[RMDB]
RNA sequence: GGGAACGACUCGAGUAGAGUCGAAAAAGCUCGUAUCCAGUUACGACUGGAUACGAGCAAGAAGGUGAUGAUGAUAAAGAUGAACGCUUGGGAACUUCGACUGACAGUGAGAACACUGAACUUUCAAGGUAGAGUCGCUAUUCGUAGCGACUCUACCAAAAGAAACAACAACAACAAC
Reactivity to 2A3 in 0.01 (KOAc 150mM, MgCl2 10mM, bicine 150mM(pH8.5), 24C), signal-to-noise 1, nucleotides 027 to 126: a020g030c000u000c000g000u000a000u000c000c000a000g000u000u180a030c070g000a010c130u000g000g000a000u000a000c000g070a000g000c000a020a000g000a000a010g000g000u030g020a020u000g000a000u000g000a040u000a190a150a110g110a120u180g040a050a000c030g000c040u080u080g040g000g000a020a020c040u000u130c040g120a110c020u060g040a040c000a010g010u040g050a110g050a090a040c040a000c090u000g000a020a010c070u050u070u110c130a150a050
Conditions: 150 mM KOAc, 10 mM MgCl2 and 150 mM bicine (pH 8.5), 24 C. Chemical mapping of a 177-nucleotide RNA with 2A3. 2A3 is a SHAPE reagent: it acylates the 2'-hydroxyl of flexible nucleotides of all four kinds. Source: RMDB library RFM100, as collected in RNAgym. For 2A3, 469 sequencing reads were counted.